[RMDB]
RNA sequence: GGGAACGACUCGAGUAGAGUCGAAAAGAUAUGGAUUGGUGACGUGCUCUGCGUUUGACGUCGGAAACGACCGAGCAGAGAACUACACGCACCAAUCCUAAGUCAAACCUACACUUCGGUGUAGGAACAUGAGACGUUAGUUCGCUAACGUCUCAUGAAAAGAAACAACAACAACAAC
Reactivity to DMS in 0.01 (KOAc 150mM, MgCl2 10mM, bicine 150mM(pH8.5), 24C), signal-to-noise 4, nucleotides 027 to 126: g010a030u000a300u020g010g000a010u000u000g010g010u000g000a130c010g030u000g000c020u000c000u000g010c000g030u000u020u000g030a140c300g000u000c000g000g000a060a050a100c010g010a010c020c100g000a100g000c000a010g000a030g000a030a020c080u020a300c000a000c010g010c010a010c000c000a000a000u000c000c000u000a010a060g010u000c020a090a130a190c000c000u000a000c010a010c010u000u020c160g020g000u010g000u000a000g000g000a030a080
Reactivity to 2A3 in 0.01 (KOAc 150mM, MgCl2 10mM, bicine 150mM(pH8.5), 24C), signal-to-noise 3, nucleotides 027 to 126: g000a010u020a020u080g010g000a000u020u010g020g020u010g080a280c010g000u010g000c000u030c000u010g020c040g140u060u300u300g160a130c160g000u020c010g000g010a050a050a020c020g010a010c040c090g020a030g000c000a000g000a010g000a020a000c040u110a020c020a000c000g020c000a000c000c000a000a000u000c000c000u000a000a000g000u000c000a000a050a180c000c010u020a000c010a000c010u090u120c300g140g000u000g000u000a010g000g000a000a030